Overview
An RNA of 177 nucleotides, treated with 2A3 and DMS and read out base by base. 2A3 is a SHAPE reagent: it acylates the 2'-hydroxyl of flexible nucleotides of all four kinds. The 2A3 profile rests on 21,788 reads. For 2A3 the reverse transcriptase was SuperScript II with manganese. For DMS the reverse transcriptase was MarathonRT.
RNA sequence: GGGAACGACUCGAGUAGAGUCGAAAAGCUCGGCCUUUCGAGGCCGAGCAGACGCCGUUUGCCUAGGCUAUAGGCUAAAUUAAAACACAAGGUGAAACACAACUGCUGAACAUUUCGAUGUUCAGAACAGUAAUAGCUAUUUCGAUAGCUAUUACUGAAAAGAAACAACAACAACAAC
Reactivity to 2A3 in 0.01 (KOAc 150mM, MgCl2 10mM, bicine 150mM(pH8.5), 24C), signal-to-noise 9, nucleotides 027 to 126: g010c000u000c000g020g020c010c020u090u090u120c200g080a010g000g020c010c010g010a000g000c000a000g000a000c060g020c010c020g020u010u050u030g000c000c000u010a020g070g000c130u140a070u020a120g010g000c000u010a030a040a060u150u140a030a050a040a020c130a010c060a110a060g130g010u090g070a070a110a000c030a010c010a130a100c070u130g000c010u010g020a010a000c010a010u070u080u120c200g080a010u010g000u000u000c000a000g010a010a010
Reactivity to DMS in 0.01 (KOAc 150mM, MgCl2 10mM, bicine 150mM(pH8.5), 24C), signal-to-noise 7, nucleotides 027 to 126: g020c000u000c010g010g010c000c000u000u000u010c140g010a030g030g030c000c000g010a010g020c010a020g000a110c140g010c020c020g010u000u010u000g020c000c000u000a010g000g000c050u020a090u000a020g000g010c000u010a020a090a090u010u010a050a060a100a100c120a070c160a100a080g000g010u000g010a080a070a070c090a060c100a060a040c120u010g010c000u000g000a010a010c000a010u000u000u010c140g010a030u000g000u000u000c000a010g000a080a150

Reactivities are rounded to 0.1 and cut off at 0 and 3.